Chemical mapping of a 177-nucleotide RNA with DMS. The data come from the RNA Mapping Database (RMDB), library TTRINS. The reactions ran in a buffer of 150 mM KOAc, 10 mM MgCl2 and 150 mM bicine (pH 8.5), at 24 C.
RNA sequence: GGGAACGACUCGAGUAGAGUCGAAAAGAUAUGGACCGUACAGACAUGCUCUUCGUUGUACCGAUUGACAUCGGAAACGAUGUCAAUCGGUACAACGGGGAGCAACAGCUGUGACGGUCCUAAGUCACGAUAAGAUGUUCUUCGGAACAUCUUAUCGAAAAGAAACAACAACAACAAC
Reactivity to DMS in 0.01 (KOAc 150mM, MgCl2 10mM, bicine 150mM(pH8.5), 24C), signal-to-noise 2, nucleotides 027 to 126: g000a070u010a300u020g000g000a000c000c000g000u000a020c010a010g000a060c140a300u000g000c000u000c000u020u000c000g000u000u000g010u000a000c020c000g000a010u000u000g020a000c000a000u000c010g000g000a110a070a220c000g040a020u000g020u000c000a000a010u000c010g000g000u010a000c000a000a000c000g000g000g000g000a020g020c000a000a000c220a170g020c010u000g000u000g010a020c010g020g020u000c000c000u000a000a060g010u000c070a300